[RMDB]
RNA sequence: GGGAACGACUCGAGUAGAGUCGAAAAGAUAUAAUUAUGGUCACUUGCAGUCUCCUUAGAUGCAUUGAGUGGAAUUUUCUUUGAAUUUGUAUUCACAAGGAAGUACUUGACAACUGCACACCAUUAUUUGGAAUACACGUCAAACCUUCAGGCAGAAGGUUUAUGCUUUUUUCGAAAAGCAUAAACCAAAAGAAACAACAACAACAAC
Reactivity to 2A3 in 0.01 (KOAc 150mM, MgCl2 10mM, bicine 150mM(pH8.5), 24C), signal-to-noise 6, nucleotides 027 to 156: g040a020u120a000u060a220a070u110u070a040u070g010g010u020c030a020c100u040u070g000c020a020g030u030c020u050c060c010u080u090a070g010a080u090g030c060a060u030u090g050a050g040u130g060g050a060a060u060u050u070u080c040u060u040u050g030a050a040u070u080u170g080u100a060u040u070c040a060c040a090a010g010g000a020a060g030u070a060c050u120u110g110a040c040a090a020c050u020g020c020a020c000a010c020c010a010u060u050a050u070u080u080g040g030a090a030u090a100c050a010c100g050u060c050a070a070a100c020c000u080u090c040a030g050g000c060a020g070a130a050
Reactivity to DMS in 0.01 (KOAc 150mM, MgCl2 10mM, bicine 150mM(pH8.5), 24C), signal-to-noise 3, nucleotides 027 to 156: g010a200u000a090u010a080a110u010u010a060u010g020g030u000c040a070c070u000u000g020c040a110g010u010c030u000c070c060u010u000a130g020a180u000g020c060a080u000u010g010a130g010u010g020g000a080a100u000u000u000u000c020u000u010u000g040a040a070u000u020u010g010u000a090u000u010c020a110c130a050a060g030g010a030a040g010u000a050c070u010u010g020a140c060a040a090c050u000g040c020a070c170a140c020c030a050u000u010a120u000u000u000g030g000a080a110u000a050c050a070c050g000u010c030a050a050a090c020c020u000u000c040a120g000g000c050a080g020a080a150

The record gives the reactivity of an RNA of 207 nucleotides to 2A3 and DMS. For 2A3, 4,142 sequencing reads were counted. It was measured as part of the RMDB library OK3TST. The reactions ran in a buffer of 150 mM KOAc, 10 mM MgCl2 and 150 mM bicine (pH 8.5), at 24 C. Values cover nucleotides 27 to 156.